[RMDB]
RNA sequence: GGGAACGACUCGAGUAGAGUCGAAAAUCCUACAUGGGCAUGUUGCAUGAAAACCGCCUGGGUCAGAAUGUUCUUCACAACACCAUGCAAGGGGAGUCCAAAAGAGAUUACAUGCGCGACACCAUCUUUCUCAUGUUGGUGCAUGCGUGGCAGACUGCAUAAGGACCUGAUUCGUCAGGUCCUUAUGAAAAGAAACAACAACAACAAC
Reactivity to DMS in 0.01 (KOAc 150mM, MgCl2 10mM, bicine 150mM(pH8.5), 24C), signal-to-noise 3, nucleotides 027 to 156: u000c010c000u000a070c040a040u010g020g030g060c100a170u000g030u010u000g010c010a180u000g000a100a040a100a070c020c030g020c100c050u010g000g020g020u000c060a110g010a170a060u000g010u000u010c080u010u000c070a100c020a050a060c020a100c060c030a090u000g000c030a070a090g010g040g030g020a120g000u010c020c040a030a080a090a130g000a130g010a120u000u010a060c040a050u020g010c020g060c010g000a070c010a030c010c000a020u000c030u000u000u010c140u000c170a130u010g000u010u000g010g010u010g000c020a100u000g030c050g080u010g030g030c050a090g020a110c040u010g000
Reactivity to 2A3 in 0.01 (KOAc 150mM, MgCl2 10mM, bicine 150mM(pH8.5), 24C), signal-to-noise 3, nucleotides 027 to 156: u000c000c000u010a020c020a080u050g010g000g030c070a070u050g010u040u040g060c080a080u040g110a030a020a010a020c040c030g080c080c080u150g060g030g020u130c090a060g060a210a090u120g080u120u040c030u110u060c040a020c000a020a080c020a020c050c000a010u040g020c060a050a060g020g000g010g020a060g050u010c040c020a010a120a040a010g130a020g010a030u150u160a070c090a060u170g010c070g010c000g030a040c010a000c010c000a020u020c020u030u210u020c080u020c060a040u290g030u070u010g010g000u010g010c030a020u170g000c000g000u000g000g000c020a010g040a210c040u060g000